[RMDB]
RNA sequence: GGGAACGACUCGAGUAGAGUCGAAAACAACAUUGGAUAACUUGGCGAAACGCCAAGCUAAUACAUGAACCAACCGGAUGUUCUCUGUUCCGGCGGCAGGGCAACCUGCUGCCAUGGGACGUCCAGCGAAUGAAUGAAAGUAAAACCAAUGCCUUCAGUAUUUAAGAUACUUCGGUAUCUUAAAUACAAAAGAAACAACAACAACAAC
Reactivity to DMS in 0.01 (KOAc 150mM, MgCl2 10mM, bicine 150mM(pH8.5), 24C), signal-to-noise 3, nucleotides 027 to 156: c030a080a050c040a040u000u000g040g020a210u000a030a040c000u010u000g000g010c000g010a170a120a150c130g030c000c010a000a000g010c000u000a040a110u010a160c010a060u000g020a090a120c020c050a170a040c020c020g020g000a000u000g010u000u000c040u010c050u000g000u000u000c140c110g010g020c000g020g070c010a020g010g010g000c300a110a170c010c000u000g030c000u010g010c000c000a050u000g000g010g000a060c020g000u010c010c000a030g000c020g000a260a090u010g020a180a060u000g000a060a090a120g030u000a070a070a090a140c000c040a020a030u000g000c030c000u000u020c050a270
Reactivity to 2A3 in 0.01 (KOAc 150mM, MgCl2 10mM, bicine 150mM(pH8.5), 24C), signal-to-noise 9, nucleotides 027 to 156: c050a010a010c000a010u000u030g020g010a030u080a190a060c000u000u010g010g000c040g160a300a150a080c170g010c000c000a000a000g000c000u030a030a030u120a090c050a040u090g060a050a030c030c020a040a030c040c040g010g000a000u010g060u200u010c050u000c020u040g160u230u130c050c060g000g010c000g000g000c000a000g000g000g010c020a050a100c000c000u000g000c000u000g000c000c000a020u030g000g000g000a000c000g000u000c000c010a010g020c030g100a080a070u110g050a060a030u080g050a110a070a040g070u130a050a080a020a000c020c000a010a010u050g030c000c020u080u080c020a020
Structure probing data (DMS and 2A3) for a 207-nucleotide construct. 2A3 is a SHAPE reagent: it acylates the 2'-hydroxyl of flexible nucleotides of all four kinds. For DMS, 4,768 sequencing reads were counted. The RNA was probed in 150 mM KOAc, 10 mM MgCl2 and 150 mM bicine (pH 8.5) at 24 C. The 2A3 profile rests on 14,171 reads.